[RMDB]
RNA sequence: GGGAACGACUCGAGUAGAGUCGAAAAGCUGAAUGUUGCUGUGCUCUCCCGGAAGAGGUAGGCACAAGUGCUUUAGAAGGAACUGUCAGAACCCCACUGCUCUACUGAGCACUGGUGAGUCUGAGGAUUCACAGGCUAAAGGCAGGUCACUGAAAGCCGUACUCCCAUUCUUCGGAAUGGGAGUACGAAAAGAAACAACAACAACAAC
Reactivity to 2A3 in 0.01 (KOAc 150mM, MgCl2 10mM, bicine 150mM(pH8.5), 24C), signal-to-noise 2, nucleotides 027 to 156: g140c030u020g000a120a070u090g050u030u070g020c050u030g000u010g000c000u000c000u040c300c050c010g010g010a110a090g090a100g040g030u170a030g090g000c060a000c000a060a010g030u030g040c010u060u000u000a030g010a120a130g150g000a000a000c000u000g010u030c010a010g040a150a150c010c020c010c000a020c040u010g050c000u010c010u140a300c240u190g000a000g010c000a000c030u020g020g010u050g010a000g030u000c000u010g020a100g020g080a080u130u000c040a060c020a070g000g020c030u070a090a000a040g000g000c000a010g000g060u090c080a050c020u080g060a020a040a000g010c000
The record gives the reactivity of an RNA of 207 nucleotides to 2A3. The RNA was probed in 150 mM KOAc, 10 mM MgCl2 and 150 mM bicine (pH 8.5) at 24 C. For 2A3 the reverse transcriptase was SuperScript II with manganese. For 2A3, 683 sequencing reads were counted. The data come from the RNA Mapping Database (RMDB), library OK3TST.